[RMDB]
RNA sequence: GGGAACGACUCGAGUAGAGUCGAAAAGUACCCUUGUUCGCAAGGGUACAAAGACAGACUUCACUGUCAUAAAGAAGGUAACAUCUCAGUUACAUUAAGAGAAAAGCACCUACUUCGGUAGGUGCAACUGUACUUGACACUUCGGUGUCAAGUACAGAAAAGAAACAACAACAACAAC
Reactivity to 2A3 in 0.01 (KOAc 150mM, MgCl2 10mM, bicine 150mM(pH8.5), 24C), signal-to-noise 2, nucleotides 027 to 126: g010u010a010c000c010c020u010u000g050u050u040c220g000c120a000a000g020g000g000u000a000c000a000a000a000g010a010c010a010g010a060c040u090u020c150a030c100u050g030u020c010a010u230a030a250a010g160a030a010g080g010u010a000a020c010a110u080c080u050c240a000g000u040u040a010c010a040u080u220a080a040g140a010g080a190a050a020a000g000c000a000c000c010u000a000c030u050u070c300g070g020u000a000g000g010u000g000c010a000a000
Reactivity to DMS in 0.01 (KOAc 150mM, MgCl2 10mM, bicine 150mM(pH8.5), 24C), signal-to-noise 1, nucleotides 027 to 126: g000u000a010c000c000c000u000u000g010u010u010c130g010c020a010a000g000g000g030u000a000c000a020a080a150g020a010c010a010g000a280c080u020u000c150a170c020u000g000u000c040a110u020a050a020a110g010a120a090g020g000u000a050a000c010a100u020c130u000c150a100g000u000u000a020c020a160u000u000a010a080g020a110g000a050a040a100a130g000c030a000c000c000u000a000c000u000u000c080g040g030u000a010g010g000u000g010c000a000a010